[RMDB]
RNA sequence: GGGAACGACUCGAGUAGAGUCGAAAACAAUAUGGGCACCGGCAUGGCGGUUGAUAUCGCUCUGCGUACCCAUGAAAUUCCGUACAUCUGGCCGCAGGCUGUUGAGCAACAGGUUGCCGGGCUGAAAUAAAAUGCCCUACUUCGGUAGGGCAUUUUAAAAAGAAACAACAACAACAAC
Reactivity to DMS in 0.01 (KOAc 150mM, MgCl2 10mM, bicine 150mM(pH8.5), 24C), signal-to-noise 1, nucleotides 027 to 126: c170a100a140u050a090u010g000g000g000c040a070c070c200g020g060c090a010u000g020g020c020g000g040u000u030g010a110u020a010u000c010g010c010u000c120u000g010c000g010u000a050c160c010c000a000u000g000a040a080a180u000u000c020c070g030u000a190c220a140u000c080u010g030g000c080c010g020c020a000g000g010c000u000g020u000u000g000a160g010c140a030a020c020a020g010g020u000u000g010c000c020g020g000g020c000u000g000a090a120a130
The record gives the reactivity of an RNA of 177 nucleotides to DMS. DMS adducts were read by reverse transcription with MarathonRT. The data come from the RNA Mapping Database (RMDB), library OK2TRN. The reactions ran in a buffer of 150 mM KOAc, 10 mM MgCl2 and 150 mM bicine (pH 8.5), at 24 C. For DMS, 810 sequencing reads were counted.